[RMDB]
RNA sequence: GGGAACGACUCGAGUAGAGUCGAAAACUACCUCAUUGGUCUUGGGUAUAGGUUUGUGUGCGUUCCUGACUUUGCUCUUCUAUUAUAUUAAUAAAGUAAAACGUGCUUUUGCAGAUUACACCCAGUGUGACUCGAACGUUCGCGUUCGAGAAAAGAAACAACAACAACAAC
Reactivity to DMS in 0.01 (KOAc 150mM, MgCl2 10mM, bicine 150mM(pH8.5), 24C), signal-to-noise 4, nucleotides 027 to 129: c130u020a080c110c020u040c000a090u060u040g010g050u030c030u030u010g000g000g000u000a040u130a070g010g020u010u000u000g040u050g070u000g040c020g040u050u010c040c020u020g000a050c040u040u010u040g000c030u030c060u040u020c000u060a060u090u040a000u040a170u000u000a000a000u030a180a070a100g020u030a100a040a110a100c140g000u010g040c080u010u000u020u010g020c000a020g040a180u000u000a080c160a040c050c030c040a110g020u030g030u060g000a110
Reactivity to 2A3 in 0.01 (KOAc 150mM, MgCl2 10mM, bicine 150mM(pH8.5), 24C), signal-to-noise 4, nucleotides 027 to 129: c020u070a090c000c000u030c010a110u000u170g040g000u010c000u030u050g000g000g000u050a010u040a060g060g070u010u070u080g150u010g060u050g040c020g010u000u000c000c000u000g050a060c030u050u020u070g040c010u030c000u070u070c050u040a160u210u100a150u110a080u290u210a170a110u150a150a120a020g030u060a010a050a080a000c010g020u040g010c000u060u020u050u060g000c000a000g010a020u000u060a020c010a000c010c010c010a030g010u050g030u050g090a020
Chemical mapping of a 170-nucleotide RNA with DMS and 2A3. The reactions ran in a buffer of 150 mM KOAc, 10 mM MgCl2 and 150 mM bicine (pH 8.5), at 24 C. It was measured as part of the RMDB library 15KLIB.